[RMDB]
RNA sequence: GGGAACGACUCGAGUAGAGUCGAAAAGACUCCGGAACUCCUGCCAUUUGAGGGACGAAGCCGCCACCGGGCGCUCCCCUCGGACCUCCUCUGGAGGGGUUCACAUCCCCAACCCGCGGGCCGGCUAAACCAACUGUGUUCGCACAGUUGAAAAGAAACAACAACAACAAC
Reactivity to DMS in 0.01 (KOAc 150mM, MgCl2 10mM, bicine 150mM(pH8.5), 24C), signal-to-noise 9, nucleotides 027 to 129: g010a110c060u030c040c060g040g010a020a010c020u010c010c010u030g090c060c030a060u020u030u030g020a020g020g000g000a070c070g030a080a070g040c120c000g010c050c020a080c170c160g010g020g000c000g000c090u040c000c010c020c080u000c020g000g000a020c040c000u000c020c020u010c050u020g010g020a080g030g000g000g010u000u000c020a070c100a110u040c020c010c000c040a080a140c020c020c030g010c070g000g000g030c010c010g020g000c000u030a050a080a080c200
Reactivity to 2A3 in 0.01 (KOAc 150mM, MgCl2 10mM, bicine 150mM(pH8.5), 24C), signal-to-noise 9, nucleotides 027 to 129: g030a010c050u030c040c030g030g000a010a010c000u010c000c000u100g300c010c050a060u040u040u090g020a010g010g010g010a010c030g040a040a010g050c080c030g040c040c020a170c120c060g110g050g000c010g000c030u100c000c010c000c000u000c000g000g010a010c000c000u020c000c000u030c020u020g010g010a010g010g000g000g000u020u020c020a020c010a080u100c000c000c000c000a030a060c010c000c000g020c020g020g000g000c000c010g020g000c030u080a080a030a020c040
The data come from the RNA Mapping Database (RMDB), library 15KLIB. Chemical mapping of a 170-nucleotide RNA with DMS and 2A3. High 2A3 reactivity points to a flexible backbone, as in loops and unpaired stretches. For 2A3, 81,595 sequencing reads were counted. The RNA was probed in 150 mM KOAc, 10 mM MgCl2 and 150 mM bicine (pH 8.5) at 24 C.